Conditions: 150 mM KOAc, 10 mM MgCl2 and 150 mM bicine (pH 8.5), 24 C.
This 177-nucleotide RNA was probed chemically with DMS and 2A3.
Source: RMDB library OK2TRN, as collected in RNAgym.
Reactivities are given for positions 27 through 126.
RNA sequence: GGGAACGACUCGAGUAGAGUCGAAAAGCUGAUGAACCGAAGCGGCUAAAGCCAAAGCCUGGAAUCAGAUAUCUUGCUGAACUGUCAGACUUUGAGAAGGAAGAUAUCCUCGCAUGGUGGAAGCAACCGUGUGCAUGUGUUUCGACACAUGCACACGAAAAGAAACAACAACAACAAC
Reactivity to DMS in 0.01 (KOAc 150mM, MgCl2 10mM, bicine 150mM(pH8.5), 24C), signal-to-noise 1, nucleotides 027 to 126: g020c040u000g000a100u000g050a090a070c080c030g000a170a090g000c030g040g000c030u000a050a260a150g000c000c040a100a110a170g010c030c040u000g020g010a080a020u000c040a130g010a300u000a030u000c020u000u000g000c010u010g000a080a130c290u000g000u000c030a070g000a090c120u030u010u000g000a030g020a090a020g000g000a140a130g000a070u000a030u000c000c010u000c170g010c030a080u020g010g040u010g000g020a300a020g030c080a110a090c090
Reactivity to 2A3 in 0.01 (KOAc 150mM, MgCl2 10mM, bicine 150mM(pH8.5), 24C), signal-to-noise 1, nucleotides 027 to 126: g050c000u070g020a080u050g060a110a040c020c010g020a110a010g010c050g040g000c060u010a060a030a030g020c000c020a060a120a000g010c000c000u000g020g040a020a050u040c000a040g010a030u040a040u000c050u040u080g000c000u030g020a140a220c120u130g140u170c040a030g030a210c060u060u260u250g030a040g020a000a000g020g000a020a000g000a060u030a140u050c010c010u000c010g080c020a020u110g000g010u000g020g030a010a030g030c000a010a000c080